[RMDB]
An RNA of 207 nucleotides, treated with 2A3 and read out base by base.
RNA sequence: GGGAACGACUCGAGUAGAGUCGAAAAGAAGGAAAGAAAGACACGAGGGCAGCGAUGACCCGCCGGGCGAUCUGUGGUCGCCAUGUGCCCGGCGUCGAGCAGUGGCGCGCCCGGGCCGUCAGAUCAAAAAACGCCCACUACUUCGGUAGUGGGCGAACCUCAUAUACAGGUUCGCCUGUAUAUGAGGAAAAGAAACAACAACAACAAC
Reactivity to 2A3 in 0.01 (KOAc 150mM, MgCl2 10mM, bicine 150mM(pH8.5), 24C), signal-to-noise 1, nucleotides 027 to 156: g060a010a020g040g040a060a010a040g040a020a060a030g020a010c010a000c080g020a020g000g000g000c010a020g030c050g090a120u090g040a100c020c000c030g000c000c010g020g060g020c030g020a000u010c040u240g080u070g060g020u060c040g040c050c000a020u100g050u080g020c000c000c030g000g020c040g040u070c050g030a010g040c050a030g020u150g060g030c020g010c000g020c000c050c000g000g000g000c020c000g030u010c000a050g040a130u170c090a040a000a000a000a000a130c080g030c060c000c050a010c010u050a000c000u010u080c120g130g000u010a000g000u010g010g050g000c020g000a000a000